Chemical mapping of a 207-nucleotide RNA with 2A3.

[RMDB]
RNA sequence: GGGAACGACUCGAGUAGAGUCGAAAAAAAAACGCUGGGCUGGUAGUUCGAACAUUUCAGCAACAGCUAACUGAAGCGCGCACGGUUAGACAUGCUGAAACUAGUUCGAGUACCAGCCUGUGCUGAAGCGCGCACGGCAACCGAAAGGUGCGAAAAACAACAGUUUGUUGUUCGCAACAAACUGUUGAAAAGAAACAACAACAACAAC
Reactivity to 2A3 in 0.01 (KOAc 150mM, MgCl2 10mM, bicine 150mM(pH8.5), 24C), signal-to-noise 1, nucleotides 027 to 156: a010a000a000a000a000c010g030c040u010g000g020g020c000u010g010g020u020a040g180u140u010c010g010a000a000c010a010u010u000u010c000a010g030c070a120a090c110a110g030c000u000a000a000c000u050g070a210a060g040c000g000c000g000c000a010c000g040g000u010u000a020g010a130c200a300u300g000c010u000g000a000a020a000c050u050a110g000u010u000c000g000a000g000u000a000c010c000a000g000c000c000u000g000u000g010c000u020g040a100a010g000c000g000c000g000c020a030c000g010g010c020a000a010c020c010g030a130a030a010g010g000u000g020c000g070a110a020a040a000a000

For 2A3, 1,168 sequencing reads were counted.